[RMDB]
RNA sequence: GGGAACGACUCGAGUAGAGUCGAAAAUGCUAAGGGUUUGAUAUCUGCUAAAACCCGGUGCAUUCAUCAAUGCAGGUUAAGCCAAAGGGAUGUCCCGACCGGAGGCCGACAAUCAAGGGAACCGGAUAAAAGAUUGGUGGGUUCGCCCACCAAUCAAUCCAUCGUAAGAGUUCGCUCUUACGAUGGAAAAAGAAACAACAACAACAAC
Reactivity to 2A3 in 0.01 (KOAc 150mM, MgCl2 10mM, bicine 150mM(pH8.5), 24C), signal-to-noise 2, nucleotides 027 to 156: u060g000c000u030a050a020g010g010g000u000u000u010g010a010u010a000u100c010u010g000c020u030a000a000a010a040c000c000c000g000g000u010g000c020a090u130u280c040a060u140c040a110a200u140g010c000a000g000g000u020u000a000a000g000c000c010a010a010a000g000g030g000a020u040g050u030c010c010c010g010a000c000c000g000g000a010g000g000c010c000g000a010c020a070a040u240c110a070a030g010g020g040a020a030c080c060g140g020a090u180a110a190a040a000g020a010u050u000g000g020u010g000g010g030u040u070c130g100c010c000c000a000c000c000a000a000u000c000a000a000
Reactivity to DMS in 0.01 (KOAc 150mM, MgCl2 10mM, bicine 150mM(pH8.5), 24C), signal-to-noise 1, nucleotides 027 to 156: u000g000c010u000a300a200g000g000g000u000u000u040g010a190u000a040u010c080u010g050c090u000a120a040a020a020c000c020c010g070g080u040g000c010a010u000u020c080a080u010c190a120a170u010g000c020a040g000g010u010u000a110a060g000c000c010a050a300a230g000g020g010a040u000g000u010c000c000c000g000a160c000c000g000g010a300g000g010c000c050g010a110c060a060a090u010c120a080a030g000g010g000a190a060c060c020g000g000a120u010a030a060a090a180g000a090u000u000g000g020u000g010g030g030u000u010c300g000c010c030c030a040c000c000a000a010u000c000a030a050